[RMDB]
RNA sequence: GGGAACGACUCGAGUAGAGUCGAAAACGCACUCGCAGCUUAAUAACCUACGCUGAGCCCUUCUCCCCCAGCUUGCCUGUGUCCUAGGGAAUUGGAAGGUCAUCCUUCACAGGAUCGUGUGGAAGUCAUUACUCGUGAGUGUUCGCACUCACGAGAACCAGACUUAUUGGUUCGCCAAUAAGUCUGGAAAAGAAACAACAACAACAAC
Reactivity to 2A3 in 0.01 (KOAc 150mM, MgCl2 10mM, bicine 150mM(pH8.5), 24C), signal-to-noise 2, nucleotides 027 to 156: c030g030c010a040c020u050c030g000c010a000g000c010u110u140a110a040u160a180a130c030c080u070a000c080g000c050u070g040a030g020c010c010c030u080u040c070u050c010c000c020c040c000a010g000c010u020u140g040c000c010u020g010u010g010u030c010c020u040a030g030g000g020a040a060u050u070g060g010a020a010g000g020u070c060a050u050c010c000u050u090c020a010c000a050g020g030a060u040c030g010u050g000u030g060g020a050a020g030u010c010a050u110u160a100c000u000c000g000u010g000a000g000u000g040u000u050c070g020c070a000c010u000c000a000c010g000a000g000a000a000
Reactivity to DMS in 0.01 (KOAc 150mM, MgCl2 10mM, bicine 150mM(pH8.5), 24C), signal-to-noise 2, nucleotides 027 to 156: c050g000c020a090c060u000c030g020c060a050g040c050u020u010a080a080u000a100a120c080c020u000a100c090g000c050u000g020a090g030c040c020c040u000u000c040u000c000c010c010c020c010a090g020c050u000u010g020c020c020u010g020u010g010u000c040c030u010a110g020g050g010a050a190u010u000g020g000a070a060g020g010u000c090a110u000c010c010u000u010c040a130c100a090g020g010a090u000c060g030u000g000u000g020g010a060a230g020u000c080a060u010u000a150c010u000c000g070u010g000a000g040u010g040u010u010c300g020c020a020c000u000c000a010c000g000a010g020a020a130

Record summary:
Structure probing data (2A3 and DMS) for a 207-nucleotide construct. The 2A3 profile rests on 1,606 reads. The RNA was probed in 150 mM KOAc, 10 mM MgCl2 and 150 mM bicine (pH 8.5) at 24 C. Values cover nucleotides 27 to 156. DMS adducts were read by reverse transcription with MarathonRT.